[RMDB]
Chemical mapping of a 207-nucleotide RNA with 2A3 and DMS. 2A3 is a SHAPE reagent: it acylates the 2'-hydroxyl of flexible nucleotides of all four kinds. Values cover nucleotides 27 to 156.
RNA sequence: GGGAACGACUCGAGUAGAGUCGAAAACAGAACGUUCCGCAGACGGCAAACAAAGAGGUUUACGUUGAAGGGAUUUACGCUGGAAACUAUCAGGUUCGCGUUCGAUCUGUAGCUGGCUCAGGUACGACUUCAGGAUGGUCAAAUAUCGUAGCUGCGAAUGAUGGACCAAAUUCGUUUGGUCCAUCAUAAAAGAAACAACAACAACAAC
Reactivity to 2A3 in 0.01 (KOAc 150mM, MgCl2 10mM, bicine 150mM(pH8.5), 24C), signal-to-noise 3, nucleotides 027 to 156: c040a010g130a030a000c020g050u040u010c020c020g020c020a000g000a020c020g010g090c120a020a130a010c060a010a180a060g110a070g100g020u010u040u050a020c020g020u030u030g030a050a060g000g020g010a000u000u150u060a060c050g020c040u060g050g090a010a090a120c040u080a140u180c060a070g020g130u030u070c070g020c020g060u060u070c040g010a050u010c020u030g030u030a000g020c040u040g070g000c030u030c050a010g070g000u040a080c070g030a030c070u070u020c030a050g080g030a080u090g000g020u040c030a040a010a030u210a030u060c030g010u030a020g000c030u040g000c010g000a050
Reactivity to DMS in 0.01 (KOAc 150mM, MgCl2 10mM, bicine 150mM(pH8.5), 24C), signal-to-noise 1, nucleotides 027 to 156: c040a140g040a060a000c030g000u000u000c050c050g080c030a300g020a050c050g000g040c060a110a020a110c040a100a150a140g030a190g040g060u000u000u000a040c010g000u010u010g000a120a210g000g000g010a180u000u000u000a060c110g000c000u020g000g000a150a020a100c050u000a130u000c060a090g030g000u000u000c070g020c080g030u000u000c020g000a060u000c030u010g050u000a050g020c050u020g050g000c000u020c020a040g030g010u000a020c060g000a050c090u000u000c020a110g050g010a060u020g000g000u010c070a030a070a090u000a020u000c030g000u000a090g030c000u010g020c030g030a090